RNA sequence: GGGAACGACUCGAGUAGAGUCGAAAAAGACUAUGGAUGUAAAACCCCUGCUCAACUACUUUGAGCCCUUGUUUACCUGGCUGAAAGAGCAGAACAGGAAUUCAUUCGUGGGAUGGAGCACGGAAUGUAUGGCUAGUAGUUUCGACUACUAGCCAUAAAAAGAAACAACAACAACAAC
Reactivity to DMS in 0.01 (KOAc 150mM, MgCl2 10mM, bicine 150mM(pH8.5), 24C), signal-to-noise 5, nucleotides 027 to 126: a050g000a140c030u010a070u000g010g020a050u010g010u030a040a030a040a210c300c070c050c010u000g000c030u010c010a080a120c050u010a070c070u000u010u000g010a010g000c000c010c270u030u010g000u010u040u030a110c210c130u010g000g000c000u010g000a000a030a040g000a020g010c150a100g000a020a020c060a020g000g000a090a100u010u000c000a020u000u010c050g020u000g000g000g000a080u000g000g010a060g020c080a040c080g000g000a080a040u050g000
Reactivity to 2A3 in 0.01 (KOAc 150mM, MgCl2 10mM, bicine 150mM(pH8.5), 24C), signal-to-noise 4, nucleotides 027 to 126: a000g040a000c030u050a060u060g030g020a030u050g030u300a040a030a040a050c010c000c000c000u010g010c000u000c010a090a080c070u210a070c030u120u060u140g040a000g000c000c000c000u140u120g080u100u090u060a130c030c020u030g020g000c020u050g050a100a040a000g080a040g020c030a010g000a030a030c040a020g000g040a030a020u100u070c000a010u040u030c040g000u010g030g000g000a050u120g020g040a050g040c040a030c050g030g040a130a010u130g030
Conditions: 150 mM KOAc, 10 mM MgCl2 and 150 mM bicine (pH 8.5), 24 C.
The record gives the reactivity of an RNA of 177 nucleotides to DMS and 2A3.
For DMS the reverse transcriptase was MarathonRT.
As a SHAPE reagent, 2A3 marks flexible, mostly unpaired nucleotides at the ribose 2'-OH.
Reactivities are rounded to 0.1 and cut off at 0 and 3.